The data come from the RNA Mapping Database (RMDB), library OK1LIB. The record gives the reactivity of an RNA of 177 nucleotides to 2A3 and DMS. The RNA was probed in 150 mM KOAc, 10 mM MgCl2 and 150 mM bicine (pH 8.5) at 24 C. For 2A3 the reverse transcriptase was SuperScript II with manganese.
[RMDB]
RNA sequence: GGGAACGACUCGAGUAGAGUCGAAAACGCCUAUGGUGACGAGCAGGAGCAUCGUCACCACAUGCAGGCCGUGUUGCUUCGCCGACGUGAGAGGGAGCGCCAGCUUGCAUAUCUGGCGUCUACGCCGAUUAGCCACUAGGUUCGCCUAGUGGCUAAUAAAAGAAACAACAACAACAAC
Reactivity to 2A3 in 0.01 (KOAc 150mM, MgCl2 10mM, bicine 150mM(pH8.5), 24C), signal-to-noise 8, nucleotides 027 to 126: c020g010c010c000u090a110u120g010g010u000g000a000c010g010a010g010c070a110g140g270a130g070c050a300u000c000g000u000c000a000c000c000a000c000a000u010g000c000a010g040g010c010c030g160u200g040u260u300g030c000u050u030c040g170c150c010g080a250c090g160u260g050a180g030a090g060g020g010a010g000c000g000c010c000a000g010c000u010u020g000c000a000u020a050u060c120u030g000g010c010g000u010c050u060a050c060g080c000c000g000
Reactivity to DMS in 0.01 (KOAc 150mM, MgCl2 10mM, bicine 150mM(pH8.5), 24C), signal-to-noise 2, nucleotides 027 to 126: c060g010c000c000u000a100u050g020g030u000g000a000c020g060a030g000c070a300g030g020a110g050c030a100u010c000g000u000c010a020c020c000a050c280a000u020g010c020a020g010g000c040c060g000u080g030u000u000g020c000u000u000c020g000c030c000g010a150c200g030u030g010a120g000a190g010g000g000a030g000c000g000c010c000a090g000c020u000u000g000c020a010u000a010u000c190u000g000g000c010g010u010c090u010a170c040g000c000c010g000